[RMDB]
RNA sequence: GGGAACGACUCGAGUAGAGUCGAAAAGGGGUGGUGCUGUUUGACGGUAUUUGAAGCGUUGAUGUUUGCCGUAGCGUUUGCGACUUUAAUCAUCGCGGUGCUGUCGUUUCAUGAAAAAAAAUAAUCCCUGUUCUCUUGAAUUCGUUCAAGAGAACAGAAAAGAAACAACAACAACAAC
Reactivity to 2A3 in 0.01 (KOAc 150mM, MgCl2 10mM, bicine 150mM(pH8.5), 24C), signal-to-noise 5, nucleotides 027 to 126: g040g010g000g010u030g030g020u010g000c030u040g040u090u090u120g040a040c020g030g040u030a160u050u100u100g100a100a050g020c020g020u040u040g030a060u050g070u020u160u110g060c020c030g010u050a030g010c030g050u040u090u150g000c020g020a060c020u070u080u120a050a030u050c040a010u020c030g000c020g000g010u040g020c010u000g010u010c020g010u000u040u050c050a100u140g100a080a030a010a000a000a000a010a030u170a010a040u050c010c020
Reactivity to DMS in 0.01 (KOAc 150mM, MgCl2 10mM, bicine 150mM(pH8.5), 24C), signal-to-noise 5, nucleotides 027 to 126: g010g000g000g020u000g000g020u000g000c060u010g000u000u020u010g010a060c050g020g010u020a060u010u010u030g000a090a120g010c040g000u000u000g010a050u000g000u000u000u000g020c060c030g020u000a070g010c110g020u000u010u010g010c020g010a050c040u000u010u020a080a050u010c090a050u010c020g030c020g000g010u000g010c040u000g020u000c010g000u000u000u000c030a070u030g010a000a000a000a020a070a060a100a110u000a070a080u020c060c080